[RMDB]
Chemical mapping of a 177-nucleotide RNA with DMS and 2A3. For 2A3, 1,321 sequencing reads were counted. Conditions: 150 mM KOAc, 10 mM MgCl2 and 150 mM bicine (pH 8.5), 24 C. Values cover nucleotides 27 to 126. Source: RMDB library OK2TST, as collected in RNAgym. DMS adducts were read by reverse transcription with MarathonRT.

RNA sequence: GGGAACGACUCGAGUAGAGUCGAAAAACUGGACAGACCGUCUCCUUUCAGGAAAAGACUGACGAGGACAGCGGCGAGGCCUACAUCUCCCUGAGGGUGAGGGCCAGGGACAGGAAGGGAGUCGAGGACUUGAGACACAGUUCGCUGUGUCUCAAGUAAAAGAAACAACAACAACAAC
Reactivity to DMS in 0.01 (KOAc 150mM, MgCl2 10mM, bicine 150mM(pH8.5), 24C), signal-to-noise 3, nucleotides 027 to 126: a090c110u000g010g010a070c050a090g000a120c010c010g000u000c300u000c010c010u000u000u000c030a050g010g000a120a070a100a110g000a180c030u000g010a040c250g000a020g000g020a000c240a150g030c000g010g000c060g000a190g000g000c010c000u010a130c110a060u000c030u000c020c040c110u010g010a140g010g000g020u000g000a300g030g010g030c020c010a020g020g000g010a170c070a030g000g000a110a040g000g000g000a050g020u010c050g000a170g020g000
Reactivity to 2A3 in 0.01 (KOAc 150mM, MgCl2 10mM, bicine 150mM(pH8.5), 24C), signal-to-noise 2, nucleotides 027 to 126: a000c030u040g040g000a020c050a050g050a120c020c040g030u010c020u070c020c010u020u070u000c020a040g000g120a110a250a050a000g180a080c000u050g010a020c090g000a020g020g060a010c020a010g070c030g040g000c000g020a030g000g000c010c000u030a060c070a090u080c070u060c030c020c100u150g070a270g080g060g000u040g050a070g060g030g000c050c020a040g030g020g020a010c030a040g000g080a040a040g070g060g000a050g040u040c030g050a050g090g040